[RMDB]
RNA sequence: GGGAACGACUCGAGUAGAGUCGAAAAUCCUCUAUCUUCGGAUAGAGGAAAAGAGCUAGCAGGUACCGCUAGCAAAGAUAAGGUACCAAGACGGAAACGUCAAAACGAAGGGGUUCGCCCCUUCGAACCGGUGUAUUAAGUUCGCUUAAUACACCGGAAAAGAAACAACAACAACAAC
Reactivity to 2A3 in 0.01 (KOAc 150mM, MgCl2 10mM, bicine 150mM(pH8.5), 24C), signal-to-noise 3, nucleotides 027 to 126: u010c000c000u000c010u000a000u000c000u010u030c110g060g000a000u000a000g000a020g000g000a040a030a010a000g050a010g000c000u000a000g000c130a120g010g000u010a000c000c010g000c000u000a010g000c040a010a020a000g030a040u200a050a030g000g010u010a000c010c010a030a050g000a000c000g010g020a050a060a000c000g010u000c000a000a020a020a050c020g000a000a000g040g010g000g000u050u110c200g130c010c010c000c010u010u000c000g000a020a010
Reactivity to DMS in 0.01 (KOAc 150mM, MgCl2 10mM, bicine 150mM(pH8.5), 24C), signal-to-noise 2, nucleotides 027 to 126: u000c000c000u000c010u000a000u000c000u000u000c150g060g010a020u000a000g010a010g000g000a010a000a080a110g010a170g000c010u000a000g000c010a150g000g000u000a000c000c000g000c000u000a000g010c000a050a040a060g000a130u010a020a080g000g000u000a000c010c000a270a140g010a000c000g000g000a060a060a190c000g010u020c010a060a040a060a220c030g000a000a000g000g000g020g010u000u020c190g010c000c000c000c000u000u000c000g000a070a090